[RMDB]
RNA sequence: GGGAACGACUCGAGUAGAGUCGAAAAGAAAGAAACAAAACAAAACAAAAACAAAACAAAACAAAAACAAAAGAAAAGGACUACCCGUCAGGGUUAAGGCCAUACGGACAGCCGGGUCCACUGCCGAGCAGUAGUUCCAGUUCGCUGGAGCUACUGCAAAAGAAACAACAACAACAAC
Reactivity to DMS in 0.01 (KOAc 150mM, MgCl2 10mM, bicine 150mM(pH8.5), 24C), signal-to-noise 3, nucleotides 027 to 126: g010a090a080a030g030a060a080a040c120a050a060a050a090c150a040a070a110a100c180a080a050a120a110a050c110a070a050a060a090c150a050a040a070a120c190a030a040a060a060a080c120a100a020a050a170g000a050a110a050a100g000g000a000c010u000a030c030c000c000g010u060c300a050g030g000g010u000u020a030a030g000g020c000c020a000u000a030c050g000g000a000c010a030g000c000c020g000g000g000u000c000c010a100c110u070g000c000c000g000a230
Reactivity to 2A3 in 0.01 (KOAc 150mM, MgCl2 10mM, bicine 150mM(pH8.5), 24C), signal-to-noise 7, nucleotides 027 to 126: g090a020a060a000g100a040a110a010c080a060a090a070a010c080a030a120a040a010c060a040a160a050a020a020c060a020a100a030a010c060a030a100a020a000c080a050a090a060a020a000c050a040a090a030a040g160a060a090a040a020g020g000a000c010u010a010c020c010c000g120u190c120a080g010g010g030u070u090a090a080g020g010c010c000a020u060a060c010g010g010a010c010a000g030c000c000g020g010g010u000c000c000a010c030u020g010c000c000g020a020
Chemical mapping of a 177-nucleotide RNA with DMS and 2A3. Values cover nucleotides 27 to 126. Conditions: 150 mM KOAc, 10 mM MgCl2 and 150 mM bicine (pH 8.5), 24 C. The 2A3 profile rests on 8,774 reads. It was measured as part of the RMDB library OK1LIB.